RNA sequence: GGGAACGACUCGAGUAGAGUCGAAAAUGAGACACUCUCGUCGCUAAAACAGUACUUUCAGGAGGCCCCUGUGAGAAGCAACAACUUUGACGGAGCGGACGAAAAUGCCUCCACCAUCCUGGACCGCAUUACGUGGAGGAUUCGUCCUCCACGUAAUAAAAGAAACAACAACAACAAC
Reactivity to 2A3 in 0.01 (KOAc 150mM, MgCl2 10mM, bicine 150mM(pH8.5), 24C), signal-to-noise 2, nucleotides 027 to 126: u140g020a030g000a020c030a010c040u030c010u040c050g060u000c020g030c070u070a030a140a070a000c020a020g080u090a060c040u060u110u070c010a050g010g080a110g000g080c030c000c000c020u010g000u040g020a090g020a090a000g030c030a010a060c020a000a110c060u090u060u170g060a050c050g060g040a020g040c040g020g050a020c040g080a040a010a020a060u080g030c010c010u000c010c000a000c000c000a040u050c020c010u010g030g040a060c040c040g000c030
Reactivity to DMS in 0.01 (KOAc 150mM, MgCl2 10mM, bicine 150mM(pH8.5), 24C), signal-to-noise 3, nucleotides 027 to 126: u000g000a110g000a090c040a050c060u000c040u000c040g020u000c020g020c060u020a070a060a140a160c090a070g010u010a070c030u000u000u000c030a060g010g030a140g040g010c210c050c010c010u010g000u000g010a110g030a090a060g000c080a060a090c160a070a100c100u010u020u000g000a130c130g000g010a040g020c030g020g020a060c050g000a020a040a070a060u010g020c000c000u000c020c120a060c060c040a030u000c030c020u010g000g000a100c050c020g010c140